This 207-nucleotide RNA was probed chemically with 2A3. The data come from the RNA Mapping Database (RMDB), library PDB130. 2A3 adducts were read by reverse transcription with SuperScript II with manganese. The reactions ran in a buffer of 150 mM KOAc, 10 mM MgCl2 and 150 mM bicine (pH 8.5), at 24 C.

[RMDB]
RNA sequence: GGGAACGACUCGAGUAGAGUCGAAAACGAUGAUCAAAUCUAUAAUGUAAUUGUUACAGCUCAUGCCUUUGUAAUAAUCUUCUUUAUAGUAAUACCCAUUAUGAUUGGGGGUUUUGGUAACUGACUCGUACCGCUAAUAAUCGGAGCUCCCGAUAUGGAGGAUAUAGGAGUUCGCUCCUAUAUCCUCAAAAGAAACAACAACAACAAC
Reactivity to 2A3 in 0.01 (KOAc 150mM, MgCl2 10mM, bicine 150mM(pH8.5), 24C), signal-to-noise 2, nucleotides 027 to 156: c030g060a030u160g040a080u090c030a070a080a010u030c010u000a030u000a040a040u020g050u040a060a090u050u000g000u000u020a010c000a000g000c000u120c160a090u280g020c040c020u120u120u130g030u000a000a000u010a000a030u030c050u080u030c000u020u110u010a090u030a040g020u030a090a040u080a090c000c000c040a020u080u120a190u240g150a090u040u020g010g000g010g050g040u020u030u080u110g000g000u030a070a070c070u000g060a030c010u010c040g040u060a060c010c020g020c050u050a090a060u040a160a020u180c010g030g030a000g090c010u060c010c000c000g010a000u000a030u090g120